[RMDB]
RNA sequence: GGGAACGACUCGAGUAGAGUCGAAAAAGAUGGCAAAGUAAUUGGUUCAAAGCUCAUUGGACAACAAUGGACAGAACCUAAAUAUUUCCAUGGACGUAUCAGUGCAGUCAAUUACAAUAUGAAUGCGUAUGUAGGCGCAGUUCGCUGCGCCUACAUAAAAAGAAACAACAACAACAAC
Reactivity to 2A3 in 0.01 (KOAc 150mM, MgCl2 10mM, bicine 150mM(pH8.5), 24C), signal-to-noise 2, nucleotides 027 to 126: a000g080a100u160g060g030c270a200a000a010g000u020a040a130u180u110g020g080u000u000c040a250a200a000g040c030u000c000a000u020u020g030g020a020c000a100a020c000a070a080u020g000g000a000c020a010g000a000a040c000c000u000a000a000a000u150a010u000u030u040c000c000a000u010g000g060a110c030g000u090a080u250c000a060g170u110g060c040a000g110u000c080a040a040u030u040a130c140a010a110u070a060u200g080a070a000u160g040c000g040
Reactivity to DMS in 0.01 (KOAc 150mM, MgCl2 10mM, bicine 150mM(pH8.5), 24C), signal-to-noise 2, nucleotides 027 to 126: a150g000a020u000g000g030c220a110a030a040g000u090a090a080u000u000g000g050u000u000c020a090a250a010g000c010u000c020a000u000u000g010g000a100c300a090a090c000a000a020u000g000g000a090c040a220g000a000a040c000c020u030a100a050a100u020a090u050u000u000c000c020a030u020g000g000a220c180g000u000a140u000c070a050g000u000g000c050a090g000u000c000a040a020u000u000a120c300a160a130u000a120u090g000a010a060u000g000c110g010
Structure probing data (2A3 and DMS) for a 177-nucleotide construct.
The RNA was probed in 150 mM KOAc, 10 mM MgCl2 and 150 mM bicine (pH 8.5) at 24 C.
For 2A3 the reverse transcriptase was SuperScript II with manganese.
In probing experiments dimethyl sulfate is read out at A N1 and C N3, which are open when not base-paired.